RNA sequence: GGGAACGACUCGAGUAGAGUCGAAAACUCGCAUUCGUGCGAGAUCCAGGGGUCGUCACAUCGAUCACGUAGCUUGGAUUUACACUGAAGCCUCCACGGUGUUGUCAGCUACGUGGGAGUGACGACGGAGGCACCCGACUUAUCACUUCGGUGAUAAUCGAAGACAUGUCUUCGGACAUGUCUUCGAAAAAGAAACAACAACAACAAC
Reactivity to 2A3 in 0.01 (KOAc 150mM, MgCl2 10mM, bicine 150mM(pH8.5), 24C), signal-to-noise 2, nucleotides 027 to 156: c000u020c010g000c000a040u060u060c160g080u040g020c000g020a010g010a030u040c020c030a030g000g060g160g000u020c010g010u000c000a010c020a100u300c060g000a000u030c000a000c000g000u000a000g060c010u090u300g240g020a040u300u270u160a030c040a010c010u050g040a090a030g040c010c010u040c010c000a010c000g000g020u010g030u050u040g030u150c260a010g010c000u000a000c000g000u000g000g010g000a020g040u000g000a000c010g010a000c010g040g010a000g010g030c000a040c020c040c020g060a110c050u030u070a010u040c010a000c010u060u050c240g150g020u000g000a020u040a030a030